[RMDB]
RNA sequence: GGGAACGACUCGAGUAGAGUCGAAAAAGGCGACGCUAAUCUCCAAACGGAGUCGUAGUUCGGAUUGCGGGCUGAAACCCGCCCGCAUGAAGCUGGAUUCGGUAGUAAUCGCGUGUCAGAAGCGCGCCGUUUAGCUUUUCUUCGGAAAAGCUAAACGAAAAGAAACAACAACAACAAC
Reactivity to DMS in 0.01 (KOAc 150mM, MgCl2 10mM, bicine 150mM(pH8.5), 24C), signal-to-noise 5, nucleotides 027 to 126: a100g000g030c010g010a090c040g010c040u010a100a130u010c010u020c010c070a090a140a110c170g000g000a030g010u010c050g020u030a060g020u010u020c030g010g000a090u000u000g010c000g000g010g020c020u010g000a070a120a120c230c110c120g000c000c010c010g010c010a010u000g010a300a110g000c040u000g000g010a080u010u000c030g010g000u020a060g010u000a090a070u030c060g010c080g000u000g010u010c120a120g010a110a120g000c000g000c010g010c130
Reactivity to 2A3 in 0.01 (KOAc 150mM, MgCl2 10mM, bicine 150mM(pH8.5), 24C), signal-to-noise 6, nucleotides 027 to 126: a010g060g020c050g010a110c020g020c020u020a050a050u050c030u010c030c050a180a120a050c100g050g010a020g020u030c050g050u070a020g020u050u130c030g000g010a020u020u040g010c000g000g000g020c020u080g060a190a100a090c020c030c000g000c000c000c000g000c000a010u020g020a010a020g010c020u050g020g030a060u040u020c040g080g000u080a020g030u070a140a100u110c040g000c030g030u080g060u090c070a030g030a150a010g040c000g000c000g020c030
An RNA of 177 nucleotides, treated with DMS and 2A3 and read out base by base. It was measured as part of the RMDB libraries RFM100 and RFMREP. The RNA was probed in 150 mM KOAc, 10 mM MgCl2 and 150 mM bicine (pH 8.5) at 24 C. For DMS the reverse transcriptase was MarathonRT.